[RMDB]
RNA sequence: GGGAACGACUCGAGUAGAGUCGAAAAAGUUUCCAAUUCGUUGGAAACUACUGUCGGAAUGCGGAAUAUAAAAUCCUCCCCUUAAGGAUUUUACCGACUUAAAGUACACUAGUUUCGACUAGUGUAAACUCUAGUACAAAUUCGUUUGUACUAGAGUAAAAGAAACAACAACAACAAC
Reactivity to 2A3 in 0.01 (KOAc 150mM, MgCl2 10mM, bicine 150mM(pH8.5), 24C), signal-to-noise 5, nucleotides 027 to 126: a000g010u010u000u000c000c000a000a010u060u070c190g030u040u010g000g020a010a000a000c000u040a070c050u070g010u020c010g010g060a140a070u170g130c080g100g210a190a050u290a030u030a090a040a000a010u010c000c010u030c020c030c000c010u010u080a060a010g000g000a000u010u020u010u040a060c000c000g000a010c000u030u150a110a050a000g070u030a000c000a000c010u010a000g000u000u050u090c140g070a010c010u000a000g000u010g000u010a000a000
Reactivity to DMS in 0.01 (KOAc 150mM, MgCl2 10mM, bicine 150mM(pH8.5), 24C), signal-to-noise 5, nucleotides 027 to 126: a230g010u000u000u000c000c000a010a030u000u010c160g020u000u000g000g000a010a000a010c000u000a050c080u010g020u000c010g010g000a230a080u010g010c150g010g010a090a060u010a210u000a020a010a020a010u000c000c000u000c130c060c080c100u010u000a080a010g010g000a000u000u000u000u000a090c010c000g010a030c020u000u000a060a070a100g010u000a010c000a000c000u000a010g010u000u000u010c170g010a020c000u000a010g010u000g000u000a010a060

Structure probing data (2A3 and DMS) for a 177-nucleotide construct. DMS adducts were read by reverse transcription with MarathonRT. Values cover nucleotides 27 to 126. It was measured as part of the RMDB library M2PK50. The reactions ran in a buffer of 150 mM KOAc, 10 mM MgCl2 and 150 mM bicine (pH 8.5), at 24 C. For 2A3, 7,895 sequencing reads were counted.